[RMDB]
RNA sequence: GGGAACGACUCGAGUAGAGUCGAAAAAACAAAUUCCAAUUGUGUGUAACAUUCAAUGCAAUUGAGCCGACGCCGUGGGAAAUCACUUUCGUGGAACCAUUUGAUCCCACGCUCGUUACUGUUAAUGAUACCUAACCUUGUUCGCAAGGUUAGGUAUAAAAGAAACAACAACAACAAC
Reactivity to DMS in 0.01 (KOAc 150mM, MgCl2 10mM, bicine 150mM(pH8.5), 24C), signal-to-noise 6, nucleotides 027 to 126: a090a010c110a060a050a120u050u000c050c010a000a030u000u010g010u020g010u000g010u020a070a100c170a110u040u010c150a080a020u010g010c050a040a030u000u000g000a120g030c210c040g010a040c060g000c300c020g000u000g000g000g000a020a050a080u000c020a000c040u010u010u030c150g010u000g000g020a090a060c190c090a050u010u010u020g000a060u010c000c000c000a020c030g020c050u010c020g000u000u000a080c120u000g000u000u010a100a130u030g000
Reactivity to 2A3 in 0.01 (KOAc 150mM, MgCl2 10mM, bicine 150mM(pH8.5), 24C), signal-to-noise 4, nucleotides 027 to 126: a000a000c160a050a100a000u300u060c020c000a030a020u030u020g010u000g000u000g040u080a130a160c040a130u080u140c100a130a090u080g010c000a000a020u000u040g040a060g040c020c050g020a040c080g000c080c040g000u000g000g010g020a030a150a020u040c000a000c000u100u150u160c090g070u110g130g060a050a050c060c000a040u040u040u140g060a100u250c000c000c010a000c000g030c000u000c000g020u030u060a030c040u050g040u090u090a130a020u130g040
This 177-nucleotide RNA was probed chemically with DMS and 2A3. Values are in units of 0.01, from 0 to 300, in steps of 10. The reactions ran in a buffer of 150 mM KOAc, 10 mM MgCl2 and 150 mM bicine (pH 8.5), at 24 C.